[RMDB]
RNA sequence: GGGAACGACUCGAGUAGAGUCGAAAAGGCCAUUAGCUCAGUUGGUUAGAGCGCCCGGCUCAUAACCGGUAGGUCUGGGGUUCGAGUCCCUGAUGGCCCACCACAAUAAUUUAAAGAACUUUGAAAAGACGGGACUAUACUUCGGUAUAGUCCCGUCAAAAGAAACAACAACAACAAC
Reactivity to 2A3 in 0.01 (KOAc 150mM, MgCl2 10mM, bicine 150mM(pH8.5), 24C), signal-to-noise 1, nucleotides 027 to 126: g060g000c010c000a000u020u020a010g000c000u000c060a050g000u120u120g290g080u300u300a000g000a000g040c000g010c000c000c000g000g000c000u000c050a060u180a120a000c060c000g060g000u000a000g010g000u000c050u000g000g000g000g070u000u000c000g000a080g010u000c000c000c000u000g070a000u020g000g010c010c000c000a020c000c000a020c010a100a040u280a060a230u050u210u150a000a170a000g290a090a120c170u170u200u150g110a000a020a090a060